[RMDB]
RNA sequence: GGGAACGACUCGAGUAGAGUCGAAAAACCGUGGACCUUCUGGGAGCGAGAAUGCUGGCAUGAGUAGCGAGAGACGAGAGGGUAACUCGUCCGCCGUAAACCCGAGGUUUCCUGGGCAAGGCUAAUCGAAGUACGUAGCAUUCGUGCUACGUACUUCAAAAGAAACAACAACAACAAC
Reactivity to DMS in 0.01 (KOAc 150mM, MgCl2 10mM, bicine 150mM(pH8.5), 24C), signal-to-noise 4, nucleotides 027 to 126: a050c030c000g020u050g000g020a090c080c050u010u010c070u020g020g020g000a070g000c050g020a120g010a100a060u040g000c020u010g010g010c070a070u030g010a110g010u020a080g000c040g000a140g010a170g000a020c010g000a010g010a130g020g020g000u020a080a100c020u000c000g020u000c010c030g020c160c000g000u020a060a100a090c000c000c020g000a050g000g000u010u010u020c000c020u000g000g010g000c070a100a090g010g000c030u010a080a090u070c160
Reactivity to 2A3 in 0.01 (KOAc 150mM, MgCl2 10mM, bicine 150mM(pH8.5), 24C), signal-to-noise 6, nucleotides 027 to 126: a010c030c000g010u040g010g020a070c020c010u090u050c090u190g020g030g000a040g020c020g010a070g060a190a060u170g010c030u050g040g060c080a140u150g070a050g090u090a000g020c030g030a090g000a010g000a080c010g020a000g000a040g040g160g020u070a050a070c000u000c000g000u000c000c020g000c000c020g020u060a070a080a050c010c000c010g020a090g030g000u040u040u020c020c010u020g000g020g000c040a040a040g060g000c040u090a060a060u160c130